[RMDB]
RNA sequence: GGGAACGACUCGAGUAGAGUCGAAAAUUGUCAUCAUAUAGUAGUAUUAGUCUACCUAAUCCUAGAUGACCUGCAAGAGAAGCUGCUUCACAAAAAACGCCUUCUUGCAUACAUCCAUCUCCACAUACAUCCUGGGGCCAUUCGUGGCCCCAGGAUGAAAAGAAACAACAACAACAAC
Reactivity to 2A3 in 0.01 (KOAc 150mM, MgCl2 10mM, bicine 150mM(pH8.5), 24C), signal-to-noise 1, nucleotides 027 to 126: u030u140g030u000c010a000u010c020a000u130a040u010a240g110u000a040g010u000a150u000u040a030g090u000c070u070a070c040c000u000a000a000u000c000c000u000a050g060a080u000g000a010c010c000u000g040c010a030a040g040a090g050a220a190g030c060u070g020c000u100u040c130a040c060a130a030a040a030a030a000c000g000c000c010u040u000c000u000u000g000c030a040u070a110c010a050u040c150c000a000u000c100u050c090c040a070c010a070u180a040
Chemical mapping of a 177-nucleotide RNA with 2A3. The RNA was probed in 150 mM KOAc, 10 mM MgCl2 and 150 mM bicine (pH 8.5) at 24 C. Values cover nucleotides 27 to 126.